Chemical mapping of a 177-nucleotide RNA with DMS and 2A3.
DMS adducts were read by reverse transcription with MarathonRT.
Values cover nucleotides 27 to 126.
The data come from the RNA Mapping Database (RMDB), library OK2TST.
The DMS profile rests on 2,479 reads.
[RMDB]
RNA sequence: GGGAACGACUCGAGUAGAGUCGAAAAUGUCCCUUGAGGGCGAGGUAUCCCCCUGCGAGGGCGAUGAUGGGGAAUGAGAGGCCGUUGAGGGCGUUCAUGAUGGGCGGGAGGACGCUGGAGACCACCAAUGAUGUAGAGCUUUCGAGCUCUACAUCAUAAAAGAAACAACAACAACAAC
Reactivity to DMS in 0.01 (KOAc 150mM, MgCl2 10mM, bicine 150mM(pH8.5), 24C), signal-to-noise 2, nucleotides 027 to 126: u010g000u010c010c010c000u020u000g010a060g000g000g000c190g010a030g000g010u000a160u000c010c090c010c020c010u000g010c060g010a080g020g020g010c080g020a080u010g000a100u000g010g020g000g000a090a080u000g000a070g010a080g020g000c020c010g010u000u010g010a140g020g000g010c050g020u000u010c070a060u000g010a130u000g000g000g000c130g010g010g000a110g010g010a090c110g020c040u010g000g010a070g000a070c060c030a100c140c090a090
Reactivity to 2A3 in 0.01 (KOAc 150mM, MgCl2 10mM, bicine 150mM(pH8.5), 24C), signal-to-noise 1, nucleotides 027 to 126: u090g040u080c000c000c000u000u040g020a050g020g040g020c040g060a090g020g070u160a160u080c030c020c000c010c000u030g100c080g020a040g000g030g010c030g030a050u110g000a010u070g020g020g000g030a090a080u110g050a110g030a030g060g030c030c040g060u060u130g060a060g030g040g000c020g030u010u040c020a020u040g070a110u080g010g000g040c100g000g000g020a030g010g000a020c020g030c060u040g000g050a060g000a010c010c050a010c020c020a030